[RMDB]
RNA sequence: GGGAACGACUCGAGUAGAGUCGAAAAAGCCAUACGGUAUGGUGUCUAAGAUUGUAACAAACAUGAACACCGUUGGGCGCAAAACUCAUGACCUGAUAGCCCUUUGUGACUUCAUUGAUAUGGAGAGGAACACAAAGAUCUUCGGAUCUUUGUGUUCAAAAGAAACAACAACAACAAC
Reactivity to DMS in 0.01 (KOAc 150mM, MgCl2 10mM, bicine 150mM(pH8.5), 24C), signal-to-noise 3, nucleotides 027 to 126: a060g000c000c010a100u010a050c040g020g020u000a030u000g010g030u010g020u000c040u010a070a130g000a210u010u010g000u020a130a070c160a090a090a040c030a060u000g000a110a090c100a020c030c010g030u000u000g000g020g000c030g010c150a080a030a060a090c090u000c020a060u010g000a070c100c020u000g020a060u010a100g010c010c020c020u000u010u000g010u000g010a100c010u000u010c070a020u010u010g010a190u010a110u000g010g000a070g000a210g010
Reactivity to 2A3 in 0.01 (KOAc 150mM, MgCl2 10mM, bicine 150mM(pH8.5), 24C), signal-to-noise 2, nucleotides 027 to 126: a000g000c000c000a020u040a110c080g040g000u060a040u140g100g000u020g040u030c070u040a100a070g010a280u140u190g100u140a100a050c010a090a110a000c020a080u070g060a050a000c020a000c000c000g030u020u060g060g000g010c080g010c060a030a050a060a080c060u060c080a030u150g050a050c000c040u030g040a080u060a070g080c000c000c010u080u060u000g100u080g070a110c030u020u010c040a040u010u240g160a110u040a010u250g070g010a100g030a060g030
Chemical mapping of a 177-nucleotide RNA with DMS and 2A3. Source: RMDB library OK2TRN, as collected in RNAgym. For DMS, 2,172 sequencing reads were counted. Conditions: 150 mM KOAc, 10 mM MgCl2 and 150 mM bicine (pH 8.5), 24 C. The 2A3 profile rests on 1,246 reads. Reactivities are rounded to 0.1 and cut off at 0 and 3. Values cover nucleotides 27 to 126. For 2A3 the reverse transcriptase was SuperScript II with manganese.